[RMDB]
RNA sequence: GGGAACGACUCGAGUAGAGUCGAAAAGAUUAGACAGGAUGAAGGAAGGCACUGGAGGAACACGGGAAAUGAGCACCGAAGUAACACCACUACGUUGUGCCCAUUGGGUACUGGACAAUUUCCUUCCGUCGAGUCACUAUUUCGAUAGUGACUCGACAAAAGAAACAACAACAACAAC
Reactivity to 2A3 in 0.01 (KOAc 150mM, MgCl2 10mM, bicine 150mM(pH8.5), 24C), signal-to-noise 2, nucleotides 027 to 126: g010a060u070u220a020g030a060c030a040g100g050a040u110g040a050a040g050g000a050a030g020g030c060a010c050u040g000g030a020g020g040a090a030c070a050c080g050g000g010a050a110a080u110g020a030g000c020a000c010c000g010a050a040g020u070a060a020c040a060c080c040a020c050u050a030c070g060u120u060g000u050g010c000c000c000a040u040u030g050g000g000u020a020c010u040g000g050a030c040a060a030u040u050u060c000c020u060u040c040c040
Reactivity to DMS in 0.01 (KOAc 150mM, MgCl2 10mM, bicine 150mM(pH8.5), 24C), signal-to-noise 2, nucleotides 027 to 126: g000a150u000u000a100g010a160c070a130g010g000a050u010g020a140a060g020g020a120a100g010g020c160a030c120u010g010g010a060g000g000a030a080c160a120c140g000g020g000a050a070a030u000g000a060g010c050a020c050c050g000a080a030g010u010a050a070c080a090c120c040a060c060u010a070c180g010u000u020g010u010g000c030c020c010a110u010u000g000g010g020u000a060c090u000g000g020a110c140a040a050u000u000u010c000c000u000u000c150c140
The record gives the reactivity of an RNA of 177 nucleotides to 2A3 and DMS. Conditions: 150 mM KOAc, 10 mM MgCl2 and 150 mM bicine (pH 8.5), 24 C. The 2A3 profile rests on 1,615 reads.